RNA sequence: GGGAACGACUCGAGUAGAGUCGAAAAUAGCUGACGUUCGCGUCAGCUAAAAGCUCCAAAACCUCCUGGCGGUGCGGCGCCGGCCCCGCCGGGAAGGCCGCCAACUCGAUGGGUUCGCCCAUCGAAACACAUAGUAACAAUUCGUUGUUACUAUGUGAAAAGAAACAACAACAACAAC
Reactivity to 2A3 in 0.01 (KOAc 150mM, MgCl2 10mM, bicine 150mM(pH8.5), 24C), signal-to-noise 5, nucleotides 027 to 126: u040a000g010c000u000g000a010c010g030u040u030c270g020c010g100u010c000a000g000c000u000a000a000a000a000g010c020u040c040c000a030a100a160a210c000c010u010c000c010u010g000g000c010g000g020u040g050c050g060g060c060g060c070c000g030g000c020c010c010c010g000c000c000g000g000g000a000a010g010g000c010c020g080c030c010a050a090c040u000c010g010a000u000g000g000g040u030u050c190g070c020c000c000a000u010c000g000a010a030a000
Reactivity to DMS in 0.01 (KOAc 150mM, MgCl2 10mM, bicine 150mM(pH8.5), 24C), signal-to-noise 9, nucleotides 027 to 126: u000a010g010c000u010g000a010c000g020u010u010c230g030c010g020u000c000a010g010c000u000a010a020a070a180g010c120u010c010c050a090a060a130a210c020c010u000c000c010u000g000g010c000g010g010u000g010c040g030g010c060g010c080c090g000g000c010c060c050c020g010c010c000g010g000g000a010a030g000g010c080c070g000c080c110a080a100c190u000c000g010a010u000g010g010g010u000u010c200g010c000c000c000a000u000c010g000a010a090a180